[RMDB]
RNA sequence: GGGAACGACUCGAGUAGAGUCGAAAAGAUACCACCAAUAAUGAUUGCAACAGUAUAUUCAAUUGUGCUUACGUUAAUAACCUUAGUAGCAUAUGUUGGUAAUAUAGGAACUAGGGCAGCAAUUGCGCCAAUUUACGGACUUCGGUCCGUAAAUUGGAAAAGAAACAACAACAACAAC
Reactivity to DMS in 0.01 (KOAc 150mM, MgCl2 10mM, bicine 150mM(pH8.5), 24C), signal-to-noise 1, nucleotides 027 to 126: g010a170u010a170c040c020a170c080c050a040a070u010a090a070u010g000a040u000u010g010c010a010a080c010a150g000u000a060u000a100u010u020c060a030a060u000u010g030u000g000c020u000u010a020c090g000u000u000a110a080u010a130a130c110c100u010u000a080g000u010a000g000c010a020u000a010u000g020u000u000g000g030u000a050a010u000a010u010a070g000g000a040a050c090u000a110g020g010g010c040a010g000c040a030a080u000u000g010c240g000
Reactivity to 2A3 in 0.01 (KOAc 150mM, MgCl2 10mM, bicine 150mM(pH8.5), 24C), signal-to-noise 1, nucleotides 027 to 126: g080a000u100a020c010c000a000c060c000a000a000u260a180a120u180g080a070u000u130g020c030a040a010c000a120g170u080a020u040a000u140u190c010a020a130u040u060g020u000g020c030u090u080a010c020g160u130u110a100a060u150a220a090c050c000u080u130a020g050u030a010g040c050a030u090a070u140g040u020u060g050g000u020a050a030u090a030u010a030g000g030a050a050c130u030a050g050g050g010c050a040g040c040a070a130u040u040g030c060g000